[RMDB]
RNA sequence: GGGAACGACUCGAGUAGAGUCGAAAAUUAUUGGGAAAGCUUACUCCAAUAUGGUGAGCACUUGGGGCAAUUGUGACUUUCCCCACUAAGAGGGGGAGUUGUCCACACCCUUCAAGAGUCGCUUGGAGCUAUGGGUACUUUUCGAAGUACCCAUAGCAAAAGAAACAACAACAACAAC
Reactivity to 2A3 in 0.01 (KOAc 150mM, MgCl2 10mM, bicine 150mM(pH8.5), 24C), signal-to-noise 2, nucleotides 027 to 126: u080u040a030u030u030g020g030g000a160a150a060g130c080u080u060a090c050u090c040c010a030a020u100a110u140g080g000u100g020a030g060c000a000c020u000u020g000g000g030g020c090a120a230u130u100g050u060g040a010c000u000u000u010c000c040c030c010a040c030u300a220a110g080a300g060g000g000g030g020a030g020u050u050g000u070c050c000a020c020a000c000c000c000u000u160c010a000a020g000a070g050u040c040g000c060u040u110g040g010a040
Reactivity to DMS in 0.01 (KOAc 150mM, MgCl2 10mM, bicine 150mM(pH8.5), 24C), signal-to-noise 2, nucleotides 027 to 126: u010u020a060u000u010g010g010g030a130a060a140g000c160u030u000a110c060u010c020c000a030a070u000a050u010g020g040u010g020a090g040c010a080c050u000u010g000g030g000g000c080a160a120u010u000g030u010g010a030c000u000u030u000c000c000c000c020a070c060u030a110a110g000a260g000g000g040g000g000a010g000u000u010g010u000c030c020a050c220a070c100c130c000u000u000c030a020a060g000a110g000u000c090g010c000u010u000g000g030a220
Chemical mapping of a 177-nucleotide RNA with 2A3 and DMS. For 2A3 the reverse transcriptase was SuperScript II with manganese. For DMS, 1,243 sequencing reads were counted. Conditions: 150 mM KOAc, 10 mM MgCl2 and 150 mM bicine (pH 8.5), 24 C. Reactivities are given for positions 27 through 126.